[RMDB]
An RNA of 207 nucleotides, treated with 2A3 and read out base by base. The data come from the RNA Mapping Database (RMDB), library M2RFPK. Reactivities are given for positions 27 through 156. The 2A3 profile rests on 449 reads.
RNA sequence: GGGAACGACUCGAGUAGAGUCGAAAAACAAGUGGUGGUAGUCCGCCACUCUAAGGGGACGCCUUUAGAAGAAGAGGCGAGGGGGUAUUCCGGUGUGGGAUACUUAGUAAUAUGCAACGCUAAUUGCUCAAGGAUAGAUGAUUCGUCAUCUAUCCAACAGUAACGAGUUCUUCGGAACUCGUUACUGAAAAGAAACAACAACAACAAC
Reactivity to 2A3 in 0.01 (KOAc 150mM, MgCl2 10mM, bicine 150mM(pH8.5), 24C), signal-to-noise 1, nucleotides 027 to 156: a000c050a040a000g000u000g040g000u020g040g150u220a110g100u120c000c020g000c010c000a010c000u020c000u020a100a040g000g000g010g020a020c010g020c050c000u220u120u120a170g030a240a060g000a020a000g020a020g050g040c010g020a090g000g000g000g000g000u030a080u110u060c090c000g160g080u240g020u060g040g050g000a020u060a050c000u080u000a050g030u100a000a170u060a050u170g030c010a070a100c030g000c170u070a210a190u060u140g000c050u070c160a190a040g010g000a000u000a000g000a000u020g000a020u020u030c190g020u000c050a000u000c000u000a000u010c000c000a000a000